[RMDB]
RNA sequence: GGGAACGACUCGAGUAGAGUCGAAAAACAAGAAAAUAUUUUCACAACUCAAGACAAGUUAAAUAUCCACUUAUGGGAACAGUGCUGAAGGCCUGGACUAGGAUGGUAGCAAUGGAGACAGACUAAAGAAAGAGAUGCAAUCAUUCCCUUGCAUAUAACUUUUAGGUCCUUUCGAGGACCUAAAAGUAAAAGAAACAACAACAACAAC
Reactivity to 2A3 in 0.01 (KOAc 150mM, MgCl2 10mM, bicine 150mM(pH8.5), 24C), signal-to-noise 1, nucleotides 027 to 156: a000c070a000a010g180a110a140a030a050u260a170u130u300u200u160c070a140c060a040a250c030u030c070a090a020g080a090c010a010a000g000u070u080a110a220a110u100a110u030c040c000a030c040u070u170a010u300g050g000g000a000a040c010a040g040u010g060c060u040g000a030a000g040g000c000c020u010g000g010a000c000u040a000g040g000a140u030g000g040u040a040g000c020a040a110u030g000g010a030g110a010c040a000g090a000c010u100a080a080a000g000a060a030a000g100a000g000a080u040g040c010a000a030u110c060a080u060u010c000c000c000u000u000g000c000a000u130a010u060a180
The record gives the reactivity of an RNA of 207 nucleotides to 2A3. It was measured as part of the RMDB library OK3TST.